Chemical mapping of a 177-nucleotide RNA with 2A3 and DMS.
RNA sequence: GGGAACGACUCGAGUAGAGUCGAAAAGAAAGAAACAGUUGGCUAGCGGAACGCACGAGGAUUAAAGCCAACCGUGCGAGUCGGAAUGCACGACCGACAAGAAAAGCCCUACAAUCGUGCAAGAAAAACCAGUGGUCCUAUUCGUAGGACCACUGGUAAAAGAAACAACAACAACAAC
Reactivity to 2A3 in 0.01 (KOAc 150mM, MgCl2 10mM, bicine 150mM(pH8.5), 24C), signal-to-noise 2, nucleotides 027 to 126: g010a000a120a010g120a070a150a020c070a070g040u080u030g030g000c110u070a070g100c110g120g020a130a110c070g000c060a010c010g060a090g090g020a030u150u220a200a060a000g000c020c000a000a000c000c000g000u030g030c010g000a000g000u040c000g000g030a250a210u070g000c000a000c040g010a000c000c040g010a000c030a030a000g110a020a110a000a030g020c020c000c000u020a020c120a000a050u000c000g000u010g000c000a000a000g130a000a070a010a000
Reactivity to DMS in 0.01 (KOAc 150mM, MgCl2 10mM, bicine 150mM(pH8.5), 24C), signal-to-noise 2, nucleotides 027 to 126: g040a050a030a090g050a130a120a090c190a110g000u000u000g000g020c010u000a210g000c070g000g050a110a190c040g000c010a090c090g000a070g010g040a110u010u030a070a050a170g020c030c020a000a000c060c050g020u000g000c020g000a020g030u020c020g010g000a060a020u000g020c020a000c030g010a050c030c000g010a020c000a060a190g000a050a010a050a180g000c050c010c000u030a110c200a040a110u010c060g030u000g000c000a050a130g000a050a020a050a130
Source information: DMS adducts were read by reverse transcription with MarathonRT. It was measured as part of the RMDB library OK1LIB. The reactions ran in a buffer of 150 mM KOAc, 10 mM MgCl2 and 150 mM bicine (pH 8.5), at 24 C.